[RMDB]
RNA sequence: GGGAACGACUCGAGUAGAGUCGAAAAUGAGUGACAUCAUGCAACACAAGUUUUGAGUUUCACUUGUCAGACUGACUGGAGAGGGGCCUGGUUAGUUACAGGAAGGUAAUUUGGCAUGCAGCCACUAAAAUGGAUUAUGAUUCGUCAUAAUCCAUUUAAAAGAAACAACAACAACAAC
Reactivity to DMS in 0.01 (KOAc 150mM, MgCl2 10mM, bicine 150mM(pH8.5), 24C), signal-to-noise 9, nucleotides 027 to 126: u010g010a120g010u000g010a080c110a090u000c040a040u000g010c060a080a070c110a090c100a060a090g010u000u000u010u000g010a120g010u000u000u000c050a060c060u000u000g000u000c090a100g000a080c060u000g010a070c050u000g010g000a090g010a070g000g000g000g010c070c030u000g010g010u000u000a050g010u000u000a060c080a050g010g010a080a050g010g010u000a040a090u000u010u000g010g010c020a060u000g010c130a100g010c020c040a050c200u000a030
Reactivity to 2A3 in 0.01 (KOAc 150mM, MgCl2 10mM, bicine 150mM(pH8.5), 24C), signal-to-noise 9, nucleotides 027 to 126: u120g010a000g020u030g030a020c000a070u050c020a020u080g030c030a100a070c050a020c020a130a060g020u050u080u130u150g090a070g020u070u140u090c040a040c010u040u060g040u070c020a020g030a110c020u050g020a020c020u030g030g010a050g020a020g060g010g020g000c010c010u020g020g000u040u070a030g010u020u040a040c010a020g040g070a060a020g080g000u050a070a140u080u070u110g020g010c010a010u110g030c030a020g010c010c010a040c030u070a060
Notes
Structure probing data (DMS and 2A3) for a 177-nucleotide construct. The DMS profile rests on 59,727 reads. The RNA was probed in 150 mM KOAc, 10 mM MgCl2 and 150 mM bicine (pH 8.5) at 24 C. Values cover nucleotides 27 to 126.